This 177-nucleotide RNA was probed chemically with 2A3 and DMS.

[RMDB]
RNA sequence: GGGAACGACUCGAGUAGAGUCGAAAAGAUAUGGAAUCACCUUCUUUUGACGCUCCGUAUUCGGAAACGAAUACGGAGCGAUAAGAAGUGUGAUUCCUAAGUCAAAAGAUUCACUUCGGUGAAUCAAGAAUGUGCAUAUGUUCGCAUAUGCACAUUCAAAAGAAACAACAACAACAAC
Reactivity to 2A3 in 0.01 (KOAc 150mM, MgCl2 10mM, bicine 150mM(pH8.5), 24C), signal-to-noise 3, nucleotides 027 to 126: g000a000u060a020u160g000g000a010a010u010c000a010c010c000u010u010c030u050u160u200u280g300a180c090g000c000u010c010c000g000u000a010u000u000c010g020g040a060a040a050c020g000a010a000u000a000c020g000g010a000g000c000g000a000u000a010a000g000a000a000g010u030g010u000g020a000u000u010c000c000u000a000a000g020u000c000a050a000a070a180g000a010u000u010c000a010c000u020u110c270g200g000u020g000a010a010u010c000a000a040
Reactivity to DMS in 0.01 (KOAc 150mM, MgCl2 10mM, bicine 150mM(pH8.5), 24C), signal-to-noise 3, nucleotides 027 to 126: g000a050u000a300u000g010g000a020a000u000c000a000c010c000u000u000c000u000u000u010u000g020a280c140g030c000u000c000c000g000u000a000u000u000c000g000g000a080a070a160c000g020a010a000u000a000c000g010g000a000g020c010g010a010u010a010a010g010a010a020g000u020g030u000g000a020u000u000c000c000u010a000a060g000u000c030a130a120a150a130g000a020u000u000c000a010c010u010u020c210g010g020u000g010a020a000u000c000a080a150
DMS adducts were read by reverse transcription with MarathonRT. The DMS profile rests on 4,664 reads.